[RMDB]
RNA sequence: GGGAACGACUCGAGUAGAGUCGAAAACGAGAGCAGCAUCAGCGCGAUACCUAUCAUUGCCGUGCCAGCGCCUUGGCGUGAGGUCGAGCCGCCUCGAUAAAGAACGAUGCCCACAACCAAUAGAAACACUAAUUAGCUCAUUCGUGAGCUAAUUAGUAAAAGAAACAACAACAACAAC
Reactivity to DMS in 0.01 (KOAc 150mM, MgCl2 10mM, bicine 150mM(pH8.5), 24C), signal-to-noise 6, nucleotides 027 to 126: c070g000a090g000a120g020c040a080g030c040a090u020c050a090g020c070g000c040g000a090u020a040c090c040u010a060u000c060a100u000u030g010c030c020g010u020g020c010c030a130g010c090g000c040c020u010u020g000g010c030g010u010g000a060g010g000u000c040g010a080g020c080c040g010c040c010u000c040g000a050u010a060a080a060g010a110a070c070g000a060u020g000c020c020c020a070c120a060a090c110c080a060a080u030a070g010a150a060a090c190
Reactivity to 2A3 in 0.01 (KOAc 150mM, MgCl2 10mM, bicine 150mM(pH8.5), 24C), signal-to-noise 9, nucleotides 027 to 126: c040g020a020g010a020g110c040a000g020c010a070u070c030a060g040c020g000c020g060a030u090a130c010c020u100a080u180c040a070u040u220g030c020c020g060u070g010c010c030a040g010c030g020c040c020u060u130g040g000c020g020u080g020a050g020g040u040c030g030a010g020c010c020g020c020c000u010c010g050a070u100a130a120a020g060a030a010c050g030a040u110g010c000c010c010a050c040a030a050c030c010a060a030u090a160g110a060a090a000c060